Source: RMDB library 15KREP, as collected in RNAgym. The record gives the reactivity of an RNA of 177 nucleotides to 2A3 and DMS. For DMS the reverse transcriptase was MarathonRT. For 2A3 the reverse transcriptase was SuperScript II with manganese. Reactivities are given for positions 27 through 126. Conditions: 150 mM KOAc, 10 mM MgCl2 and 150 mM bicine (pH 8.5), 24 C.

RNA sequence: GGGAACGACUCGAGUAGAGUCGAAAACCUCGGAUGUCCAGGCCGUCCCCUCUUCUAGAGAAGGGAGACUCCGGAACUUCUUCCAUGAUUGGGACGAAGCCGCCACCGGGCGCUCCCCUCGGAGGUCGCAUAUAGACAGGUUCGCCUGUCUAUAUGCAAAAGAAACAACAACAACAAC
Reactivity to 2A3 in 0.01 (KOAc 150mM, MgCl2 10mM, bicine 150mM(pH8.5), 24C), signal-to-noise 1, nucleotides 027 to 126: c000c000u000c020g030g020a080u120g080u040c000c030a020g030g070c000c000g010u040c010c000c000c030u010c010u060u030c010u090a080g000a010g010a080a150g050g040g000a010g000a040c010u000c000c010g020g000a030a010c000u000u020c000u020u010c010c000a060u130g050a220u300u210g110g000g010a000c000g010a000a010g040c040c060g090c080c050a090c020c000g010g010g000c090g000c010u000c000c010c000c000u000c010g020g000a050g010g000u130c070
Reactivity to DMS in 0.01 (KOAc 150mM, MgCl2 10mM, bicine 150mM(pH8.5), 24C), signal-to-noise 1, nucleotides 027 to 126: c030c010u010c070g020g010a100u010g010u000c030c050a060g010g020c060c040g000u020c020c010c010c070u000c010u000u000c040u010a110g020a120g010a180a070g000g000g010a030g000a080c020u010c020c010g000g020a210a130c020u010u000c020u000u010c010c020a060u010g030a230u010u000g020g000g000a030c130g010a000a000g020c160c130g010c180c170a120c070c010g000g000g010c180g010c010u010c000c000c020c060u000c010g000g000a050g030g020u010c110